[RMDB]
RNA sequence: GGGAACGACUCGAGUAGAGUCGAAAAACGCUGGGAUACAGGGCAUAUUGACCACGAGGACUCCCCACCAUAUCUGAAGCGCGCACGGAUAUGAGGUCCUUAUCAAAUAUGCAUUGUAUCCUGUGCUGAAGCGCGCACGGCAACCGAAAGGUGCGAAGUAGUAAAAAUUGUUCGCAAUUUUUACUACAAAAGAAACAACAACAACAAC
Reactivity to 2A3 in 0.01 (KOAc 150mM, MgCl2 10mM, bicine 150mM(pH8.5), 24C), signal-to-noise 4, nucleotides 027 to 156: a000c020g000c010u020g000g000g000a000u000a000c000a020g060g000g010c020a000u030a010u010u100g130a180c060c060a080c260g030a060g000g020a010c020u120c080c060c020c010a020c010c000a010u000a000u000c000u020g060a230a040g010c010g000c000g000c010a010c000g010g000a000u000a000u010g020a030g030g010u000c000c000u090u070a160u190c030a040a070a050u040a000u000g000c000a010u000u010g000u000a000u000c000c000u000g010u000g000c000u040g020a120a050g010c010g000c010g010c000a010c000g010g000c010a020a020c000c010g050a080a030a040g020g000u010g010c010g000a150a020
Reactivity to DMS in 0.01 (KOAc 150mM, MgCl2 10mM, bicine 150mM(pH8.5), 24C), signal-to-noise 2, nucleotides 027 to 156: a070c000g080c020u010g010g010g020a000u000a010c030a050g000g000g000c040a030u000a030u000u000g000a070c180c090a070c060g000a010g000g000a070c020u000c300c090c010c070a300c100c020a020u040a000u000c010u000g010a030a030g030c040g010c000g020c010a300c020g000g010a020u000a010u000g000a190g000g010u010c010c030u000u010a060u010c020a050a050a080u000a030u000g010c010a030u000u010g000u000a010u010c010c000u000g030u010g000c030u010g030a070a090g000c000g060c030g030c000a300c010g000g000c060a010a080c030c010g010a150a150a130g010g010u010g020c010g010a080a110